Chemical mapping of a 177-nucleotide RNA with DMS and 2A3. Values are in units of 0.01, from 0 to 300, in steps of 10. The reactions ran in a buffer of 150 mM KOAc, 10 mM MgCl2 and 150 mM bicine (pH 8.5), at 24 C.

[RMDB]
RNA sequence: GGGAACGACUCGAGUAGAGUCGAAAAAGACUGAUUAACGAAUUGAAUCCAGCUUGAUAUUACACGAUUUAAUCUGAUAUCAGUUCAUUAACUAGGCCGUAAAGGACGUAGAUUAAUACGUUCUUAAGAAUGCCUGUUUUUUCGAAAGCAGGUAUUCAAAAGAAACAACAACAACAAC
Reactivity to DMS in 0.01 (KOAc 150mM, MgCl2 10mM, bicine 150mM(pH8.5), 24C), signal-to-noise 9, nucleotides 027 to 126: a090g000a050c000u000g000a030u010u010a070a220c130g000a030a020u000u000g010a020a040u000c080c120a120g010c150u030u020g010a090u040a060u050u020a090c190a090c300g000a030u000u010u010a020a010u000c000u000g010a160u020a050u000c000a000g000u010u000c040a060u010u020a030a040c050u010a030g000g000c020c050g010u040a060a030a040g000g000a010c000g010u000a000g000a150u040u030a070a070u000a010c020g000u000u000c000u000u000a040a100
Reactivity to 2A3 in 0.01 (KOAc 150mM, MgCl2 10mM, bicine 150mM(pH8.5), 24C), signal-to-noise 8, nucleotides 027 to 126: a000g030a010c010u010g000a020u040u010a070a020c070g020a040a110u010u020g010a000a000u000c040c010a040g080c120u070u100g080a030u070a080u230u140a100c090a010c080g010a010u010u010u020a020a010u000c000u000g000a010u020a010u130c000a000g000u010u040c020a030u000u010a000a030c060u010a030g130g000c020c010g110u100a070a040a000g000g000a010c000g010u000a000g020a210u090u210a100a030u030a030c000g000u000u000c000u000u000a020a020

Notes:
For DMS the reverse transcriptase was MarathonRT. It was measured as part of the RMDB library OK1LIB.